[RMDB]
RNA sequence: GGGAACGACUCGAGUAGAGUCGAAAAGCAGAGGAGAUGCUGUGAUGGAAGGCAGGUGUGGUCUGUGCCCUCACAGAGCUUGCUGUCCAGUGGAGGUGAGGAUUCAGUAAGCACUUGUCCUAUGUGCACCCCACCAGCAAGUCUCCCGCCUUCACAGGGGUUCAAUAGAGUUCGCUCUAUUGAACCCAAAAGAAACAACAACAACAAC
Reactivity to 2A3 in 0.01 (KOAc 150mM, MgCl2 10mM, bicine 150mM(pH8.5), 24C), signal-to-noise 1, nucleotides 027 to 156: g090c050a000g050a220g010g000a000g000a010u000g020c010u010g030u150g070a240u030g000g000a010a080g040g000c060a080g000g000u050g010u040g030g030u010c000u000g030u030g060c010c000c000u060c020a060c010a040g100a010g000c000u040u070g000c160u070g070u050c030c060a030g000u030g040g140a140g010g000u030g010a000g000g000a020u160u000c000a000g000u020a090a000g030c000a000c010u050u080g000u070c020c040u070a100u120g140u210g030c010a110c010c030c020c000a000c000c000a000g010c010a050a040g190u000c000u000c000c000c020g040c020c000u130u110c130a110c070a150g050